This 207-nucleotide RNA was probed chemically with DMS and 2A3. Conditions: 150 mM KOAc, 10 mM MgCl2 and 150 mM bicine (pH 8.5), 24 C. It was measured as part of the RMDB library OK3TST.
RNA sequence: GGGAACGACUCGAGUAGAGUCGAAAAAGCGCGUAGGAGCCGUUGGAGAGUGUAUAGAGCCUAUCGGCCAUCCGAAACGUACGCAAGCAUACGUACUGUUACGGAUGGGAAAGCAUGCGAGUUCGUGGAUGGGAAAGCAUGCCGUCUGCCACGGCGCAUCACCGAUGUAUUUCGAUACAUCGGUGAUAAAAGAAACAACAACAACAAC
Reactivity to DMS in 0.01 (KOAc 150mM, MgCl2 10mM, bicine 150mM(pH8.5), 24C), signal-to-noise 2, nucleotides 027 to 156: a050g000c020g030c050g020u000a100g010g000a120g020c040c100g030u020u000g010g000a090g010a100g030u000g000u000a130u000a090g000a170g010c020c020u000a110u000c050g020g000c000c000a020u000c000c030g020a080a030a040c040g000u000a010c000g020c040a060a220g030c230a200u010a030c030g040u000a000c010u020g020u000u000a130c000g010g000a000u000g010g000g010a050a060a090g030c050a050u010g000c020g000a130g020u000u000c070g060u000g000g000a100u000g020g010g000a030a080a120g000c010a040u010g010c000c010g020u000c040u010g010c050c040a070c020g010g030c020g020c080
Reactivity to 2A3 in 0.01 (KOAc 150mM, MgCl2 10mM, bicine 150mM(pH8.5), 24C), signal-to-noise 4, nucleotides 027 to 156: a000g070c050g030c050g030u040a090g000g040a010g010c030c020g050u060u070g020g030a060g000a010g040u080g030u100a100u090a150g100a020g030c010c010u070a070u090c000g010g020c000c000a010u000c000c000g030a050a010a000c010g010u040a000c020g010c060a110a190g030c000a130u150a200c010g000u010a010c040u250g010u020u030a020c000g000g000a000u000g000g030g000a010a040a020g010c000a010u060g000c030g030a070g090u090u120c050g030u140g110g000a100u080g080g000g000a020a070a000g010c020a000u020g010c000c000g100u050c020u040g020c000c030a010c000g040g010c010g000c000